Chemical mapping of a 177-nucleotide RNA with DMS and 2A3. Values are in units of 0.01, from 0 to 300, in steps of 10. Reactivities are given for positions 27 through 126. Source: RMDB library TTRDES, as collected in RNAgym. The DMS profile rests on 1,492 reads.
RNA sequence: GGGAACGACUCGAGUAGAGUCGAAAAGAUAUGGAUCAUCCUAGAGCAACAGCUACUACUCGGAAACGAGUACGUAGACAUGCUCUGGAUGAUCCUAAGUCAAAACAAAGACGUUCGCGUCUUUGAAUCAAAAACUUGAGUUCGCUCAAGUUUUUGAAAAAGAAACAACAACAACAAC
Reactivity to DMS in 0.01 (KOAc 150mM, MgCl2 10mM, bicine 150mM(pH8.5), 24C), signal-to-noise 2, nucleotides 027 to 126: g000a040u000a170u030g010g000a040u000c000a010u000c010c020u010a000g030a030g030c020a080a070c300a140g020c000u010a010c000u000a000c000u000c000g000g030a080a060a120c000g020a000g000u000a000c300g020u000a000g010a000c070a300u020g000c000u000c010u010g000g010a000u010g020a000u000c000c000u000a000a080g000u000c030a080a090a150a300c030a030a010a000g000a010c000g050u010u000c280g020c010g010u000c000u020u000u010g000a180a180
Reactivity to 2A3 in 0.01 (KOAc 150mM, MgCl2 10mM, bicine 150mM(pH8.5), 24C), signal-to-noise 1, nucleotides 027 to 126: g000a000u030a000u040g000g010a000u000c000a000u000c050c140u190a000g010a010g000c140a060a180c110a210g050c020u000a020c000u000a020c000u000c000g000g030a000a010a020c020g000a000g000u020a020c190g020u020a010g040a010c040a170u300g000c010u040c010u010g010g000a010u010g000a000u000c010c000u010a010a030g000u000c000a020a040a100a110c010a000a000a000g000a010c020g070u120u150c300g090c020g210u010c000u000u010u010g040a030a120
The reactions ran in a buffer of 150 mM KOAc, 10 mM MgCl2 and 150 mM bicine (pH 8.5), at 24 C. High DMS reactivity at an A or C suggests that its Watson-Crick edge is free.